The data come from the RNA Mapping Database (RMDB), library TTRDEL. The record gives the reactivity of an RNA of 177 nucleotides to 2A3 and DMS. The 2A3 profile rests on 1,531 reads. For 2A3 the reverse transcriptase was SuperScript II with manganese.

RNA sequence: GGGAACGACUCGAGUAGAGUCGAAAAGAUAUGGACACGGGCUCGCUUGGAUUUAUUCCCGUAUUCGGAAACGAAUACGCAUUGUCAGCGAGCCGUGUCCUAAGUCAAACGGAAGUUCGCUUCCGAAUCAAACGAGGAAGUUCGCUUCCUCGUUUGAAAAAGAAACAACAACAACAAC
Reactivity to 2A3 in 0.01 (KOAc 150mM, MgCl2 10mM, bicine 150mM(pH8.5), 24C), signal-to-noise 2, nucleotides 027 to 126: g010a000u070a040u120g010g000a010c020a000c060g300g240g060c060u000c010g030c010u110u190g110g000a020u170u300u230a200u300u150c050c010c020g000u010a000u030u000c000g060g000a060a040a100c000g000a000a000u010a000c010g010c010a110u090u300g190u230c050a020g000c000g000a000g000c000c010g000u000g020u000c000c020u000a000a000g010u000c020a050a050a040c000g000g000a000a010g000u050u130c210g100c140u000u000c000c000g000a000a090
Reactivity to DMS in 0.01 (KOAc 150mM, MgCl2 10mM, bicine 150mM(pH8.5), 24C), signal-to-noise 2, nucleotides 027 to 126: g010a100u000a280u010g000g000a040c000a010c030g010g030g000c000u000c000g010c000u000u000g050g000a040u000u010u000a130u030u000c090c090c010g010u000a000u010u010c010g000g020a150a140a150c010g020a000a000u010a000c010g060c090a040u000u000g000u000c150a040g000c010g000a010g010c000c000g000u000g000u000c000c000u000a000a050g000u010c040a020a130a190c060g000g010a010a020g020u000u010c270g040c000u000u000c000c010g010a050a080
Reactivities are given for positions 27 through 126.